[RMDB]
RNA sequence: GGGAACGACUCGAGUAGAGUCGAAAACACUGAAUGUCCGUGAUCCUGUAUCAGGACGUCCUGUCAUGAAAGAGCCAUGGCCAGAGGCUAUGUUAUGCCCUACAUACAAGACUGCUGUGCCUAGCACGACGCCACAGAUAUUCGUAUCUGUGGCGUCAAAAGAAACAACAACAACAAC
Reactivity to DMS in 0.01 (KOAc 150mM, MgCl2 10mM, bicine 150mM(pH8.5), 24C), signal-to-noise 2, nucleotides 027 to 126: c100a160c100u000g000a030a060u000g000u000c030c020g020u000g010a020u010c070c240u000g020u000a040u030c020a250g000g010a050c040g000u000c040c010u030g040u020c120a090u000g010a040a100a040g000a160g010c060c030a040u010g010g010c000c000a120g010a090g020g000c020u000a010u000g010u000u000a060u000g000c030c050c040u000a130c060a070u000a050c060a050a060g010a040c050u000g000c010u000g010u020g020c010c010u000a090g020c070a160c140
Reactivity to 2A3 in 0.01 (KOAc 150mM, MgCl2 10mM, bicine 150mM(pH8.5), 24C), signal-to-noise 2, nucleotides 027 to 126: c100a030c050u080g040a110a050u090g000u010c050c020g250u120g010a020u070c070c150u180g040u210a030u050c020a020g040g010a030c010g030u000c000c000u050g040u080c080a150u150g120a070a050a110g120a000g000c000c010a040u030g020g070c010c000a050g050a050g070g000c000u040a100u210g070u110u060a060u140g010c050c000c020u040a060c030a030u100a010c030a030a030g070a020c020u030g000c020u020g200u110g040c000c000u030a020g010c050a020c070